An RNA of 177 nucleotides, treated with DMS and 2A3 and read out base by base.

[RMDB]
RNA sequence: GGGAACGACUCGAGUAGAGUCGAAAAUUUUGCCUUCUUAUUUACGUUUGACAGGACCCUACAUACGGCAUGCACACAGGAGUCGAGGGUUGUGUGUUAACUGGGUGCGUUCUGAGCGGGAUACGGCCACCUAUGGGGGCUUCGGCCCCCAUAGGUGAAAAGAAACAACAACAACAAC
Reactivity to DMS in 0.01 (KOAc 150mM, MgCl2 10mM, bicine 150mM(pH8.5), 24C), signal-to-noise 1, nucleotides 027 to 126: u010u020u020u010g000c050c040u000u000c020u030u000a140u000u000u040a100c080g000u000u030u000g000a020c060a080g010g020a150c040c020c000u000a080c080a160u000a210c150g000g020c010a090u040g050c000a010c150a090c030a000g010g000a050g020u000c020g000a190g010g000g000u020u000g030u000g030u010g020u000u000a040a040c090u010g000g000g010u000g010c100g000u000u000c100u000g000a030g010c010g020g030g010a020u020a040c180g000g030c210
Reactivity to 2A3 in 0.01 (KOAc 150mM, MgCl2 10mM, bicine 150mM(pH8.5), 24C), signal-to-noise 2, nucleotides 027 to 126: u110u090u030u090g060c020c000u060u110c040u060u090a090u050u140u050a190c110g090u050u070u050g180a050c000a010g030g010a020c010c010c000u010a030c020a090u080a010c000g000g030c040a010u120g020c050a000c000a000c020a050g020g020a100g050u070c050g020a090g050g000g000u020u010g010u000g000u020g040u010u080a140a040c050u020g060g000g000u040g000c020g000u080u000c060u100g040a020g030c030g040g030g000a010u010a090c000g040g000c040
Conditions: 150 mM KOAc, 10 mM MgCl2 and 150 mM bicine (pH 8.5), 24 C. The data come from the RNA Mapping Database (RMDB), library OK1LIB. For DMS the reverse transcriptase was MarathonRT. Values cover nucleotides 27 to 126.